[RMDB]
RNA sequence: GGGAACGACUCGAGUAGAGUCGAAAAUCGUAAGUACUAUUUAUUGCGAGUGCAUGGAAGAGGCGAAUAGAGAACGGAACGUUGUCCACCCCUUCAAUCAUCAUCAAAUUGGAUUGCGGGCACUUUACUUAUUUAAAACGUUCGCGUUUUAAAUAAGAAAAGAAACAACAACAACAAC
Reactivity to DMS in 0.01 (KOAc 150mM, MgCl2 10mM, bicine 150mM(pH8.5), 24C), signal-to-noise 4, nucleotides 027 to 126: u000c040g020u010a060a090g010u000a090c090u000a110u010u010u000a090u010u000g000c040g010a100g030u010g010c090a040u010g000g010a050a050g010a090g020g020c040g010a090a090u010a080g010a090g010a060a070c080g000g000a070a060c090g020u000u000g020u000c020c040a150c070c040c010c030u000u000c050a020a030u000c020a070u000c070a070u000c140a040a050a090u010u010g000g000a010u000u000g010c300g010g010g010c280a010c040u000u010u000a120
Reactivity to 2A3 in 0.01 (KOAc 150mM, MgCl2 10mM, bicine 150mM(pH8.5), 24C), signal-to-noise 2, nucleotides 027 to 126: u060c010g020u030a000a100g060u020a090c040u090a130u130u250u030a110u060u100g040c020g030a040g080u060g060c030a040u090g000g030a090a000g000a060g070g000c040g020a060a020u050a060g080a010g000a040a030c020g030g070a070a040c040g050u030u020g020u000c020c010a060c010c020c000c000u030u030c010a020a030u010c020a080u020c010a030u030c050a150a110a080u190u190g040g000a030u020u030g050c090g030g000g010c070a010c020u020u070u020a040